Chemical mapping of a 177-nucleotide RNA with DMS and 2A3. High DMS reactivity at an A or C suggests that its Watson-Crick edge is free. The data come from the RNA Mapping Database (RMDB), library TTRDES. The reactions ran in a buffer of 150 mM KOAc, 10 mM MgCl2 and 150 mM bicine (pH 8.5), at 24 C. The 2A3 profile rests on 4,329 reads.

RNA sequence: GGGAACGACUCGAGUAGAGUCGAAAAGAUAUGGAGACACUGUGUACAUCAACAGCAUCAGUCGGAAACGACUGAUGACAUGAUGGCAUUGUCUCCUAAGUCAAAACCAACAUCUUCGGAUGUUGGACACCAAAGCUGAGUUCGCUCAGCUUUGGUGAAAAGAAACAACAACAACAAC
Reactivity to DMS in 0.01 (KOAc 150mM, MgCl2 10mM, bicine 150mM(pH8.5), 24C), signal-to-noise 2, nucleotides 027 to 126: g000a030u010a300u000g000g000a000g010a050c000a040c300u010g040u000g000u030a300c020a020u010c000a030a120c300a150g010c000a000u000c020a000g010u000c000g040g000a070a120a180c010g030a010c020u000g000a020u000g010a020c070a150u010g010a020u010g000g020c000a030u020u000g030u020c010u000c000c010u010a000a060g000u010c030a090a080a100a210c000c000a010a010c000a000u000c000u000u020c210g060g000a000u000g020u010u010g000g000a140
Reactivity to 2A3 in 0.01 (KOAc 150mM, MgCl2 10mM, bicine 150mM(pH8.5), 24C), signal-to-noise 2, nucleotides 027 to 126: g040a010u080a030u190g020g000a000g010a020c050a000c120u080g000u030g110u300a180c030a080u100c070a070a210c030a210g030c000a000u010c010a000g000u010c010g040g000a050a050a060c030g020a000c010u000g000a000u000g010a000c010a030u090g010a010u030g000g000c010a010u000u060g000u000c010u000c010c000u000a080a010g030u010c020a030a020a110a180c000c000a010a000c010a000u020c000u140u130c300g140g000a010u030g020u000u000g010g010a070